The record gives the reactivity of an RNA of 177 nucleotides to 2A3 and DMS. For 2A3, 986 sequencing reads were counted. For DMS the reverse transcriptase was MarathonRT. Values cover nucleotides 27 to 126. 2A3 adducts were read by reverse transcription with SuperScript II with manganese. Conditions: 150 mM KOAc, 10 mM MgCl2 and 150 mM bicine (pH 8.5), 24 C.
RNA sequence: GGGAACGACUCGAGUAGAGUCGAAAAGAGGAUUCAACGAGCUUCGUAGCAACGAUAGCAACGUAGCUUUUGCUACGACCCAAGCUAUCGAGGGGAGCUACGUCCCGUGCUCGAGGGAAGAAUCCGAAUUAAAUGCUGCGUUCGCGCAGCAUUUAAUAAAAGAAACAACAACAACAAC
Reactivity to 2A3 in 0.01 (KOAc 150mM, MgCl2 10mM, bicine 150mM(pH8.5), 24C), signal-to-noise 1, nucleotides 027 to 126: g110a050g000g020a000u000u020c040a090a070c090g000a020g000c020u090u050c090g030u000a000g000c040a100a130c070g020a030u020a010g030c040a040a100c000g010u000a010g000c000u130u280u300u300g000c000u010a010c020g030a070c000c030c020a050a000g020c010u030a000u010c000g020a090g050g090g000g070a080g000c000u030a000c000g010u010c010c090c010g030u060g000c000u010c000g000a020g000g130g070a100a120g010a000a000u000c020c030g000a010
Reactivity to DMS in 0.01 (KOAc 150mM, MgCl2 10mM, bicine 150mM(pH8.5), 24C), signal-to-noise 2, nucleotides 027 to 126: g010a180g000g020a060u000u000c000a180a160c020g010a040g000c010u010u010c000g060u010a020g010c000a170a200c060g000a000u000a000g020c010a080a140c010g020u000a010g000c000u010u000u020u010g010c000u000a000c020g000a120c130c100c240a100a120g020c010u010a000u000c000g010a110g000g000g020g000a100g000c040u000a010c060g000u000c070c050c160g010u000g020c000u000c000g000a120g040g000g010a110a130g000a020a000u000c000c000g010a110